[RMDB]
RNA sequence: GGGAACGACUCGAGUAGAGUCGAAAAUCGAAACCGUUGACGAACUCGCUAUCGCUUGUGGCGCGCAUCAGCCUUCGGUGGUGUUUAUUAAUGAGGACUGUUUCAUUCAUACGCCUUCAGACAGUCAAGGGCUAUUAGGAUUCGUCCUAAUAGCCCUAAAAGAAACAACAACAACAAC
Reactivity to DMS in 0.01 (KOAc 150mM, MgCl2 10mM, bicine 150mM(pH8.5), 24C), signal-to-noise 3, nucleotides 027 to 126: u060c020g010a130a090a040c060c030g030u010u000g000a090c050g020a060a120c060u000c040g000c060u010a030u000c070g010c140u010u010g020u010g000g000c030g000c080g000c100a050u000c050a140g000c060c050u030u020c020g000g030u000g000g020u010g000u010u000u030a050u020u020a060a050u020g000a090g010g010a020c020u020g000u010u010u020c090a070u010u010c090a070u040a100c130g000c020c030u000u010c060a060g010a040c020a040g010u000c000a090
Reactivity to 2A3 in 0.01 (KOAc 150mM, MgCl2 10mM, bicine 150mM(pH8.5), 24C), signal-to-noise 4, nucleotides 027 to 126: u120c040g040a030a020a000c020c000g040u050u040g030a020c020g010a080a050c000u010c060g040c030u030a000u070c040g050c190u050u130g030u050g070g020c030g000c000g000c050a080u030c020a070g040c000c010u010u010c020g070g020u050g010g020u080g030u040u110u040a160u050u070a110a090u050g030a050g100g020a050c070u110g020u000u090u000c040a010u060u040c010a020u100a200c040g070c040c000u040u080c000a070g020a150c030a010g020u040c050a040